Description:
An RNA of 177 nucleotides, treated with DMS and read out base by base. The RNA was probed in 150 mM KOAc, 10 mM MgCl2 and 150 mM bicine (pH 8.5) at 24 C. DMS (dimethyl sulfate) methylates the pairing face of unpaired adenines and cytosines. DMS adducts were read by reverse transcription with MarathonRT.

[RMDB]
RNA sequence: GGGAACGACUCGAGUAGAGUCGAAAAGAUAUGGAAGCCUGACGGACCACGACGUUGAAACGUGUACUAACUCGGAAACGAGUUAGUACACGUGGAGUCGUGGAGAACCGUCUGGCUUCCUAAGUCACUGCUACUAACAGUUCGCUGUUAGUAGCAGAAAAGAAACAACAACAACAAC
Reactivity to DMS in 0.01 (KOAc 150mM, MgCl2 10mM, bicine 150mM(pH8.5), 24C), signal-to-noise 1, nucleotides 027 to 126: g000a050u010a300u000g000g010a000a020g010c000c000u010g010a020c000g020g020a110c010c000a010c000g000a010c000g000u060u000g000a150a160a040c000g020u010g010u000a000c000u010a020a010c010u010c000g000g000a130a200a300c000g000a020g000u000u000a010g000u000a010c000a000c000g000u000g010g000a040g030u000c000g040u010g000g000a020g000a110a120c000c000g000u000c000u000g010g030c000u010u000c010c010u000a000a050g010u000c010a220